[RMDB]
RNA sequence: GGGAACGACUCGAGUAGAGUCGAAAAGGACUGCGCAGUCCGGCAACAUCAGCAGAGAGCCCGCUAUACGUGACGGAUUGGCUGAAGCGUACAGAAAUAUUGAGCCUCCUGCAAAAGGCAGCCAAGCAAAACGUACGUGAGUUCGCUCACGUACGAACAUACUCUGGCCCUUCGGGGCCAGAGUAUGAAAAGAAACAACAACAACAAC
Reactivity to 2A3 in 0.01 (KOAc 150mM, MgCl2 10mM, bicine 150mM(pH8.5), 24C), signal-to-noise 1, nucleotides 027 to 156: g030g020a030c070u090g010c200g010c210a000g030u000c000c000g000g030c020a090a070c050a140u240c050a020g010c020a000g050a000g030a040g000c050c000c000g000c030u100a140u020a090c100g030u110g080a020c000g030g100a090u060u080g060g000c050u010g030a040a020g030c020g000u040a000c020a040g110a080a170a040u180a080u140u170g010a020g010c000c000u010c000c000u000g050c060a150a030a070a030g020g010c000a030g000c010c000a000a000g070c090a110a040a000a000c000g000u020a000c000g000u000g000a000g000u000u210c120g030c030u000c000a000c000g000u000a000c000g000a030a000

Conditions: 150 mM KOAc, 10 mM MgCl2 and 150 mM bicine (pH 8.5), 24 C. An RNA of 207 nucleotides, treated with 2A3 and read out base by base. For 2A3 the reverse transcriptase was SuperScript II with manganese. Reactivities are given for positions 27 through 156. The data come from the RNA Mapping Database (RMDB), library M2RFPK.